An RNA of 207 nucleotides, treated with DMS and 2A3 and read out base by base. DMS (dimethyl sulfate) methylates the pairing face of unpaired adenines and cytosines. Reactivities are given for positions 27 through 156.

[RMDB]
RNA sequence: GGGAACGACUCGAGUAGAGUCGAAAAAUACAUACUGACAGCGGUUGCUCAACAGGCUGUGUGGGACAAUAGAAUAACAAGGCUGUCAAUUUGAGCUUGACGGCUGCAAACCGAAUGGAGUGAAAUCGUAACCGGACUCACUUCGGUGAGUCCGGAAGGAUAUAGAUUGAUUCGUCAAUCUAUAUCCAAAAGAAACAACAACAACAAC
Reactivity to DMS in 0.01 (KOAc 150mM, MgCl2 10mM, bicine 150mM(pH8.5), 24C), signal-to-noise 2, nucleotides 027 to 156: a120u000a080c040a090u000a090c020u020g020a040c040a050g040c030g030g050u000u000g010c020u010c030a100a090c040a090g030g000c020u010g020u020g020u020g000g040g000a070c030a070a120u010a070g010a150a060u000a070a140c060a110a180g000g020c000u000g000u000c000a010a040u000u000u020g030a180g010c300u000u000g020a040c000g020g050c020u010g030c070a050a100a050c030c020g000a070a150u010g010g010a120g030u020g010a060a080a100u000c090g010u010a120a180c010c000g020g010a020c000u010c000a010c010u000u020c240g040g020u010g010a020g030u000c000c000g000g000a000a000
Reactivity to 2A3 in 0.01 (KOAc 150mM, MgCl2 10mM, bicine 150mM(pH8.5), 24C), signal-to-noise 3, nucleotides 027 to 156: a000u170a000c030a020u120a050c030u090g070a050c030a040g030c010g120g020u090u050g010c020u050c050a060a060c030a080g130g030c040u070g030u020g040u070g090g040g050a010c070a010a110u100a140g110a090a060u110a150a030c060a130a050g050g000c010u000g000u010c000a000a010u050u010u090g030a040g030c000u010u010g020a000c010g020g010c000u030g020c020a050a070a060c040c020g080a140a100u090g040g020a050g040u050g040a060a070a050u120c080g020u030a050a060c000c000g000g000a000c000u010c000a000c000u010u030c050g040g000u000g000a000g000u000c010c000g000g000a000a000